[RMDB]
RNA sequence: GGGAACGACUCGAGUAGAGUCGAAAAGACCGCUCGGCCAAGCUGUCACGGCCGGUCACCGGCGACGAGCUGCGCGCGACUUUGCUUGCGUUACUUGGCAGCCCGCACCUGUGCAGCCGCGCGUUCAAACGGUCUAGACUUUCGAGUCUAGACCGUUAAAAGAAACAACAACAACAAC
Reactivity to DMS in 0.01 (KOAc 150mM, MgCl2 10mM, bicine 150mM(pH8.5), 24C), signal-to-noise 2, nucleotides 027 to 126: g010a050c040c030g010c040u000c050g000g000c070c130a140a090g000c070u020g010u010c140a020c140g030g020c010c040g020g020u010c050a100c020c030g000g010c020g010a120c010g020a050g020c000u000g020c010g000c000g000c020g000a010c040u030u000u000g010c190u000u000g000c020g000u000u000a060c230u020u010g010g020c030a000g010c010c020c040g000c030a110c090c030u000g010u020g000c060a260g000c000c010g020c170g010c020g000u000u010c080a090
Reactivity to 2A3 in 0.01 (KOAc 150mM, MgCl2 10mM, bicine 150mM(pH8.5), 24C), signal-to-noise 2, nucleotides 027 to 126: g060a000c020c010g010c010u040c010g040g010c000c020a110a020g000c010u040g110u250c030a040c080g060g000c060c040g000g030u260c060a050c050c030g020g000c020g040a200c020g010a040g030c010u010g000c020g010c010g000c020g000a000c000u210u240u260g050c060u040u030g020c020g000u030u050a120c060u140u190g070g010c000a000g010c000c000c000g060c030a050c020c050u070g000u060g010c010a000g030c000c000g000c000g000c000g000u010u070c020a020
The record gives the reactivity of an RNA of 177 nucleotides to DMS and 2A3.
Conditions: 150 mM KOAc, 10 mM MgCl2 and 150 mM bicine (pH 8.5), 24 C.
The DMS profile rests on 1,699 reads.
The 2A3 profile rests on 1,548 reads.
Values cover nucleotides 27 to 126.